[RMDB]
RNA sequence: GGGAACGACUCGAGUAGAGUCGAAAAGCACUCCUUUUCGAAGGAGUGCCCAGGCGCGCGGCCUUUGUCCUGUCGCGUGUGCGCCGCGGGCGAUAUACGCGCAUCUGUGCAUAUUCGUAUGCACAAACAGGUACUUCACAUUCGUGUGAAGUACCUGAAAAGAAACAACAACAACAAC
Reactivity to DMS in 0.01 (KOAc 150mM, MgCl2 10mM, bicine 150mM(pH8.5), 24C), signal-to-noise 2, nucleotides 027 to 126: g020c010a020c000u000c010c000u000u000u000u000c140g010a030a000g000g010a030g020u010g010c000c010c050a040g000g010c040g000c020g000c050g000g000c040c120u000u000u000g000u000c020c030u000g020u010c130g010c000g000u000g000u000g000c040g020c040c040g030c070g010g000g000c040g000a050u010a110u020a070c030g000c010g030c090a080u010c160u000g000u010g000c000a000u000a010u000u000c180g000u000a000u000g020c000a000c000a030a060a150
Reactivity to 2A3 in 0.01 (KOAc 150mM, MgCl2 10mM, bicine 150mM(pH8.5), 24C), signal-to-noise 2, nucleotides 027 to 126: g000c010a020c010u000c000c000u030u050u010u070c210g170a010a000g000g000a000g000u000g000c010c010c000a030g060g000c020g000c010g000c040g100g000c030c000u080u080u140g080u040c010c020u030g070u110c020g000c000g040u090g100u090g000c000g000c020c010g040c040g020g070g000c040g010a020u040a020u020a180c010g010c000g000c030a050u030c090u080g010u000g010c000a010u020a010u030u090c120g070u030a000u010g000c000a000c010a010a020a000